[RMDB]
RNA sequence: GGGAACGACUCGAGUAGAGUCGAAAAGAUAUGGAACGUAUUAUCAGCUUUGAUCGUGGUGUCGGAAACGACACGUAACAUCGGGAGCUGUGUACGUUCCUAAGUCAAACUGAUCUUCGGAUCAGAACAGUCAAAAGGUGUUCGCACCUUUUGACUGAAAAGAAACAACAACAACAAC
Reactivity to 2A3 in 0.01 (KOAc 150mM, MgCl2 10mM, bicine 150mM(pH8.5), 24C), signal-to-noise 2, nucleotides 027 to 126: g040a010u060a030u210g000g010a010a020c000g030u030a020u150u110a140u300c050a010g010c010u070u090u140g020a030u100c160g050u050g030g050u020g010u000c010g080g000a100a040a070c020g000a000c010a000c010g010u140a030a040c000a040u090c040g050g090g000a010g000c000u010g020u000g000u020a000c000g000u000u000c000c000u000a000a010g000u000c010a020a020a120c010u000g000a010u030c010u050u050c300g130g000a030u000c000a000g010a050a050
Reactivity to DMS in 0.01 (KOAc 150mM, MgCl2 10mM, bicine 150mM(pH8.5), 24C), signal-to-noise 2, nucleotides 027 to 126: g000a070u000a300u000g000g000a030a010c010g000u000a010u010u010a110u010c000a000g000c010u000u000u010g000a020u000c170g040u010g030g030u000g000u000c000g000g010a100a050a170c010g000a010c000a000c000g010u000a080a100c070a040u050c030g020g010g000a010g050c000u000g020u000g000u000a000c000g000u020u000c000c000u000a030a040g000u010c010a040a080a170c000u000g000a000u000c000u000u010c220g010g010a020u000c000a020g000a110a160
Chemical mapping of a 177-nucleotide RNA with 2A3 and DMS. Values cover nucleotides 27 to 126. The 2A3 profile rests on 3,600 reads.